[RMDB]
RNA sequence: GGGAACGACUCGAGUAGAGUCGAAAAAAAAAGGAACUUCCCGGCAAAUCCUCCUGUCAGGUGCUUGCGCUCAAAUUUGCCAGAUGCGUAAUCGCGAAAAAGUUCCAUUAAUGACAGGAGGAAAAAACAUUCAUUACUUGUUCGCAAGUAAUGAAUGAAAAGAAACAACAACAACAAC
Reactivity to DMS in 0.01 (KOAc 150mM, MgCl2 10mM, bicine 150mM(pH8.5), 24C), signal-to-noise 2, nucleotides 027 to 126: a000a040a060a050a070g000g000a010a060c020u000u000c020c000c000g020g000c170a060a140a070u000c000c030u000c000c010u010g000u000c000a070g000g020u000g000c140u010u000g010c000g010c000u000c050a080a050a080u010u010u020g000c210c120a110g010a010u020g030c000g030u000a010a030u010c050g010c020g010a050a050a040a070a070g010u000u000c000c010a160u000u010a040a050u000g000a010c010a010g010g010a000g000g000a010a010a010a020a030a010